[RMDB]
RNA sequence: GGGAACGACUCGAGUAGAGUCGAAAAAUGAGGUCGUACAAGCAGAUGUUAUUGGUAGGUCAAUAAUAUCUGCUUGUACGACCAAGAGUAUGUGUGAGUAUUUCACCCGUUACUCGGGCAUACUCAAGGUUGAGGUUGAUUUCGAUCAGCCUCAACCAAAAGAAACAACAACAACAAC
Reactivity to DMS in 0.01 (KOAc 150mM, MgCl2 10mM, bicine 150mM(pH8.5), 24C), signal-to-noise 2, nucleotides 027 to 126: a110u040g030a100g010g000u000c010g020u000a010c000a000a010g000c000a000g010a010u000g000u000u000a000u000u010g000g000u060a130g010g020u050c000a010a000u000a000a000u000a000u000c010u000g000c000u010u000g010u000a000c010g010a000c000c010a010a000g000a020g030u000a000u010g010u010g020u000g000a030g000u000a010u020u010u010c200a220c070c010c050g000u050u010a020c010u000c000g010g000g020c010a000u000a000c000u010c000a110a080
Reactivity to 2A3 in 0.01 (KOAc 150mM, MgCl2 10mM, bicine 150mM(pH8.5), 24C), signal-to-noise 1, nucleotides 027 to 126: a000u300g100a050g030g030u020c010g010u000a000c000a020a000g000c000a000g000a000u000g000u000u000a000u000u030g030g080u150a300g050g140u200c000a000a000u000a000a000u020a010u010c020u000g000c000u000u010g000u040a000c140g050a020c000c000a010a000g000a000g020u000a000u000g020u050g150u050g020a000g010u000a040u020u270u090c190a250c020c010c010g020u000u000a000c000u000c000g000g080g050c000a000u000a000c000u050c000a020a030
The data come from the RNA Mapping Database (RMDB), library OK1LIB. An RNA of 177 nucleotides, treated with DMS and 2A3 and read out base by base. Reactivities are given for positions 27 through 126. The reactions ran in a buffer of 150 mM KOAc, 10 mM MgCl2 and 150 mM bicine (pH 8.5), at 24 C.